[RMDB]
RNA sequence: GGGAACGACUCGAGUAGAGUCGAAAACAAAAAGCAUGAACAGUUCUGCUGAUGUGACAUCUGAUUUCUACGUGCGCAGUGAGCCAAAACAGCUGCUGUUUGCUAUGGAAAAAGUGGCGCCAAUCGAAAAGGCUUUAGUCUUCGGACUAAAGCCUUUAAAAGAAACAACAACAACAAC
Reactivity to 2A3 in 0.01 (KOAc 150mM, MgCl2 10mM, bicine 150mM(pH8.5), 24C), signal-to-noise 1, nucleotides 027 to 126: c010a040a010a020a000a000g060c050a030u090g030a120a010c010a090g030u100u030c000u210g000c020u020g000a040u090g020u050g030a050c050a010u070c000u110g000a060u000u050u070c030u030a060c000g080u080g040c000g000c000a000g000u040g210a050g000c010c050a010a040a040a040c010a050g000c040u010g010c000u050g080u010u040u030g000c030u000a090u190g040g050a000a040a000a000a000g120u080g030g010c050g000c030c000a030a110u070c030g100a110
Reactivity to DMS in 0.01 (KOAc 150mM, MgCl2 10mM, bicine 150mM(pH8.5), 24C), signal-to-noise 2, nucleotides 027 to 126: c040a000a050a110a110a020g020c020a020u000g010a070a220c200a080g030u020u000c000u000g000c000u000g000a160u030g000u010g020a050c040a020u070c070u000g000a220u000u000u020c000u000a060c200g010u010g000c050g010c050a010g000u040g010a040g010c000c030a060a050a130a100c300a120g040c030u010g000c000u000g000u000u000u000g000c030u000a170u010g000g010a030a030a060a060a050g040u000g020g010c130g030c070c160a040a050u060c050g020a150

An RNA of 177 nucleotides, treated with 2A3 and DMS and read out base by base. For DMS, 2,631 sequencing reads were counted. For DMS the reverse transcriptase was MarathonRT. The 2A3 profile rests on 497 reads. The data come from the RNA Mapping Database (RMDB), library RFM100. The reactions ran in a buffer of 150 mM KOAc, 10 mM MgCl2 and 150 mM bicine (pH 8.5), at 24 C.